[RMDB]
RNA sequence: GGGAACGACUCGAGUAGAGUCGAAAAGAUAUGGACACAGCUUGGAUUUAUGAUCAUUCGGAAACGAAUGAGUCAUUGUCAGCUGCGUCCUAAGUCAAACACAUGGUUGGUUCGCCAACCAUGUGAAGAGCAGCUUAGAGUUCGCUCUAAGCUGCUCAAAAGAAACAACAACAACAAC
Reactivity to DMS in 0.01 (KOAc 150mM, MgCl2 10mM, bicine 150mM(pH8.5), 24C), signal-to-noise 1, nucleotides 027 to 126: g010a030u000a120u010g000g000a010c000a040c000a000g000c000u000u000g070g010a180u020u000u010a020u010g000a100u000c000a010u000u000c000g020g000a020a040a050c000g010a000a000u000g010a030g000u000c000a000u010u000g030u010c000a040g010c000u010g000c010g020u000c000c000u010a000a060g000u010c010a080a120a300c000a000c000a000u000g000g000u010u000g000g010u000u010c300g020c000c000a020a010c000c000a000u000g000u000g000a020a080
Reactivity to 2A3 in 0.01 (KOAc 150mM, MgCl2 10mM, bicine 150mM(pH8.5), 24C), signal-to-noise 3, nucleotides 027 to 126: g000a000u040a000u050g000g010a000c010a000c000a010g030c030u240u300g220g020a130u300u300u160a000u140g000a000u020c000a000u020u010c000g010g020a000a010a010c000g010a010a000u010g010a030g020u000c020a030u100u300g160u080c000a000g000c020u030g020c010g000u000c000c000u000a020a000g030u010c020a160a040a060c000a010c000a020u000g040g010u010u020g040g040u060u110c290g110c120c000a000a000c000c010a000u000g000u000g000a020a020